[RMDB]
RNA sequence: GGGAACGACUCGAGUAGAGUCGAAAAGGAGGCAAGAAUAAUUUAGCCGUCAUGUUGCUGAUUGGUCGAGGUGCUAACGCUGGUGAAUCGUGGUACGCGCCUAAAUAUCAUGUAUGGCGGCAAAUGGUGCGCGACUCUAUCAGAAAGAUGGUUGACAUAAUUGAUCGAUUUUCGAAUCGAUCAAUUAAAAAGAAACAACAACAACAAC
Reactivity to 2A3 in 0.01 (KOAc 150mM, MgCl2 10mM, bicine 150mM(pH8.5), 24C), signal-to-noise 3, nucleotides 027 to 156: g110g010a010g040g010c050a090a040g060a160a150u200a080a050u080u050u110a040g020c000c000g010u000c000a010u060g110u190u130g040c080u000g010a040u030u060g030g030u150c070g060a030g000g060u010g030c000u030a080a040c010g000c050u070g120g120u140g120a070a080u150c040g010u010g010g010u030a030c070g000c000g020c010c000u030a050a060a000u120a010u040c030a000u070g070u080a000u020g030g000c000g010g000c000a000a000a020u020g000g000u060g000c050g000c000g040a010c000u000c010u040a040u060c020a020g050a040a070a040g040a030u110g040g000u060u040g030a050c010a070
Reactivity to DMS in 0.01 (KOAc 150mM, MgCl2 10mM, bicine 150mM(pH8.5), 24C), signal-to-noise 3, nucleotides 027 to 156: g040g010a090g000g010c040a100a070g010a120a140u000a070a120u000u000u000a150g020c020c010g030u010c010a130u010g020u000u000g010c080u000g020a100u000u010g020g030u010c060g040a080g050g020u000g030c030u000a060a050c050g000c010u010g020g050u010g030a080a080u010c030g020u000g020g000u000a050c130g030c040g000c020c010u000a030a060a070u000a060u000c040a080u000g000u000a090u000g010g020c030g030g020c020a030a010a060u010g040g030u000g010c000g010c060g010a050c010u010c030u000a120u000c030a120g000a090a110a120g010a100u000g040g020u000u000g020a070c090a160